[RMDB]
RNA sequence: GGGAACGACUCGAGUAGAGUCGAAAAGACACCCUUCGCAGAUGACCUCCUCGUUGGUGGGUGUCGGCCGUGUUGUCAGUCACAGGCAACAGUUAACGAUCUGCGUAAAUAAAAAGAGAAGAACAAAAAUUAGGAGUCCAUUCGUGGACUCCUAAUUAAAAGAAACAACAACAACAAC
Reactivity to DMS in 0.01 (KOAc 150mM, MgCl2 10mM, bicine 150mM(pH8.5), 24C), signal-to-noise 2, nucleotides 027 to 126: g040a020c080a000c010c000c000u000u040c000g050c060a000g000a000u000g010a050c000c000u000c180c000u020c180g010u030u000g010g020u000g010g000g020u020g000u000c000g000g020c000c190g040u020g010u000u000g040u000c000a140g060u030c230a100c300a190g010g000c010a000a010c000a120g020u000u020a000a040c000g010a000u040c030u000g000c010g000u080a060a070a030u040a050a040a000a120a060g040a100g000a030a040g020a050a100c150a050a060a080
Reactivity to 2A3 in 0.01 (KOAc 150mM, MgCl2 10mM, bicine 150mM(pH8.5), 24C), signal-to-noise 3, nucleotides 027 to 126: g010a000c000a000c000c000c000u040u140c020g000c010a000g000a000u000g020a020c010c020u020c000c010u110c060g180u180u260g000g000u000g000g000g000u000g000u000c000g000g000c020c060g140u220g000u010u000g020u020c050a030g100u130c120a110c060a200g030g000c000a000a000c000a000g000u010u000a000a020c020g000a030u000c000u010g000c000g000u000a010a100a050u210a010a040a020a050a000g150a030g030a120a030g060a150a050c100a170a080a050